Structure probing data (2A3 and DMS) for a 207-nucleotide construct. Reactivities are given for positions 27 through 156. For 2A3 the reverse transcriptase was SuperScript II with manganese. The reactions ran in a buffer of 150 mM KOAc, 10 mM MgCl2 and 150 mM bicine (pH 8.5), at 24 C.

RNA sequence: GGGAACGACUCGAGUAGAGUCGAAAACUUUCCAAACUUCGGUUUGGAAAGAAAAACCGUAGGUACCCUACAUUAGAGUACCAUUCGAAAGAGUGGUCACUCAACGAUGUAGAGCGUACCUAAACGGAAAAAAGAUAGUUUGUUCGCAAACUAUCAACUAUACCGAUAAGUUCGCUUAUCGGUAUAGAAAAGAAACAACAACAACAAC
Reactivity to 2A3 in 0.01 (KOAc 150mM, MgCl2 10mM, bicine 150mM(pH8.5), 24C), signal-to-noise 3, nucleotides 027 to 156: c000u000u010u000c000c000a000a010a000c010u050u050c250g070g010u010u000u000g000g030a000a000a000g010a040a030a000a010a010c010c000g010u020a010g010g000u000a000c000c000c000u000a000c000a020u020u030a060g000a000g010u010a010c000c010a000u010u000c030g060a130a090a070g010a000g010u010g010g000u030c130a030c010u000c020a080a050c240g030a010u010g000u010a010g030a050g050c110g000u000a000c000c000u000a020a000a000c000g020g070a040a020a030a060a050a030g010a000u010a010g010u000u000u000g090u080u100c270g000c160a000a000a000c000u000a000u000c000a000a000
Reactivity to DMS in 0.01 (KOAc 150mM, MgCl2 10mM, bicine 150mM(pH8.5), 24C), signal-to-noise 2, nucleotides 027 to 156: c000u000u000u020c000c000a000a020a010c020u000u020c290g010g000u030u000u000g000g000a000a020a030g010a020a060a060a100a100c000c000g000u000a030g000g000u000a010c000c010c010u000a010c000a000u000u010a180g010a020g020u000a060c010c000a020u000u000c020g010a210a150a270g010a040g030u000g000g010u000c100a040c000u000c000a140a140c220g010a040u000g050u000a010g000a040g030c050g030u000a000c010c000u010a000a020a050c000g010g000a010a050a110a140a130a110g000a040u000a010g010u030u010u000g010u000u010c300g040c030a000a000a000c010u000a000u000c000a080a120